[RMDB]
RNA sequence: GGGAACGACUCGAGUAGAGUCGAAAAUACGAUAGCUUCACACCAGAAUGAAAUACGGACGAAGUUAUCUUCUUUAUUAGCGCUAGCUAGAUGCAAGCACGUCUAGAGAGAAGAUACAUUGAGAUCAGUGGGUCCUGCAAUUCGUUGCAGGAUCCACAAAAGAAACAACAACAACAAC
Reactivity to DMS in 0.01 (KOAc 150mM, MgCl2 10mM, bicine 150mM(pH8.5), 24C), signal-to-noise 3, nucleotides 027 to 126: u010a100c070g000a060u000a030g000c000u000u000c070a070c160a150c040c000a090g000a120a120u010g040a150a040a030u020a070c110g050g010a170c140g000a020a040g020u010u020a000u000c000u000u000c000u000u020u000a110u070u000a060g000c120g000c100u000a060g000c000u000a050g060a070u040g040c170a060a030g020c090a240c040g000u000c000u000a000g020a040g000a010g000a030a010g020a000u020a030c300a080u000u010g000a090g000a100u000c030a110
Reactivity to 2A3 in 0.01 (KOAc 150mM, MgCl2 10mM, bicine 150mM(pH8.5), 24C), signal-to-noise 7, nucleotides 027 to 126: u230a040c070g080a060u020a060g010c030u010u030c030a040c030a100c060c000a050g080a100a130u180g090a100a050a040u190a070c070g020g010a010c040g050a050a000g020u060u010a000u000c000u000u000c000u010u060u080a230u070u060a060g020c030g030c110u040a040g040c000u030a070g020a230u150g090c100a100a040g020c050a030c090g040u020c010u020a010g000a000g010a000g000a040a000g010a000u020a040c050a100u080u210g070a080g020a150u090c070a060